[RMDB]
RNA sequence: GGGAACGACUCGAGUAGAGUCGAAAAGGAAAUUUGAUCCAUGUAAUCACUUGACUAAAUAGUGUGUUAAUAGACUAGAAAGAGUCUUAUUUUCCUCAGCCAUCACCUUCAAGUGUUUCUGUUGAAGAUGCAAGAGUCUUAGAAUAAUUUAACCUCACCGCUGCCAUUAGUUCGCUAAUGGCAGCGGAAAAGAAACAACAACAACAAC
Reactivity to 2A3 in 0.01 (KOAc 150mM, MgCl2 10mM, bicine 150mM(pH8.5), 24C), signal-to-noise 1, nucleotides 027 to 156: g110g000a040a070a040u170u160u200g120a080u060c020c020a100u150g030u070a000a010u050c010a000c050u060u000g080a020c030u150a060a050a230u110a120g020u060g000u000g000u100u020a080a040u090a180g030a020c000u000a030g210a150a060a000g040a000g000u010c000u050u090a130u020u040u000u050c000c000u070c060a000g020c030c000a050u050c010a000c000c000u100u060c050a020a060g040u010g000u150u020u000c020u050g030u020u010g000a060a030g000a030u150g030c050a090a130g030a020g100u020c130u190u190a030g160a170a080u100a030a040u060u130u180a060a050c120c030u060c040a020